[RMDB]
The record gives the reactivity of an RNA of 177 nucleotides to 2A3 and DMS. As a SHAPE reagent, 2A3 marks flexible, mostly unpaired nucleotides at the ribose 2'-OH. For DMS the reverse transcriptase was MarathonRT. The DMS profile rests on 119,501 reads. The reactions ran in a buffer of 150 mM KOAc, 10 mM MgCl2 and 150 mM bicine (pH 8.5), at 24 C. It was measured as part of the RMDB library OK1LIB.

RNA sequence: GGGAACGACUCGAGUAGAGUCGAAAAGAUAUCUACCGAUCCGGACUAACAAGGAGUUAGAUCGAUGAUAUAUAGUCCUGUGGUAGAAUAUCGAAUCGUUACUCUGUACUCCUUGACGUGCAGGUAGGCUUGACGAAGAUUUCGAUCUUUGUCGAGCAAAAGAAACAACAACAACAAC
Reactivity to 2A3 in 0.01 (KOAc 150mM, MgCl2 10mM, bicine 150mM(pH8.5), 24C), signal-to-noise 9, nucleotides 027 to 126: g010a000u020a010u000c000u000a000c010c010g070a070u020c030c060g010g010a010c010u040a080a060c080a110a080g210g020a060g120u160u140a090g040a200u100c070g050a070u090g060a010u060a020u040a020u040a170g020u010c000c010u050g030u080g040g000u010a010g050a130a040u010a010u010c010g010a020a050u070c030g040u050u030a050c050u050c010u160g030u030a010c010u050c080c050u050u170g070a060c060g000u010g000c010a010g020g030u040a030g060
Reactivity to DMS in 0.01 (KOAc 150mM, MgCl2 10mM, bicine 150mM(pH8.5), 24C), signal-to-noise 9, nucleotides 027 to 126: g000a010u000a000u000c000u000a010c010c000g010a130u030c100c150g000g000a030c010u000a050a130c110a090a100g000g010a080g000u010u040a100g010a120u010c040g000a150u020g000a130u030a100u030a130u010a030g010u000c000c000u010g020u030g010g010u000a010g000a040a040u000a000u000c010g010a100a100u020c080g010u030u020a020c020u030c000u000g010u000a010c010u010c060c150u020u020g000a080c180g010u000g000c010a030g000g000u000a030g010